[RMDB]
RNA sequence: GGGAACGACUCGAGUAGAGUCGAAAAGAUAUGGACUAGAACUACUCCCGAAAGAGCGUUGAAAACCGAGUUUAUCGGAAACGAUAAACUCGGUUGGAGCUCUAGUAGCUGGAGCUAGUCCUAAGUCGAAUACGCAUAGGUUCGCCUAUGCGUAUUCAAAAGAAACAACAACAACAAC
Reactivity to DMS in 0.01 (KOAc 150mM, MgCl2 10mM, bicine 150mM(pH8.5), 24C), signal-to-noise 2, nucleotides 027 to 126: g010a150u030a300u020g000g010a030c000u000a010g000a060a080c080u020a300c000u000c010c000c020g010a210a170a180g000a010g030c000g010u000u010g000a170a080a020a000c010c000g010a020g000u000u000u000a010u000c000g020g000a100a050a140c000g000a010u000a000a000a000c000u000c000g020g000u000u000g000g010a100g030c000u000c000u000a040g020u010a130g000c140u000g000g000a010g000c030u000a000g000u000c000c000u000a010a080g010u010c080
An RNA of 177 nucleotides, treated with DMS and read out base by base. The reactions ran in a buffer of 150 mM KOAc, 10 mM MgCl2 and 150 mM bicine (pH 8.5), at 24 C. For DMS the reverse transcriptase was MarathonRT. High DMS reactivity at an A or C suggests that its Watson-Crick edge is free.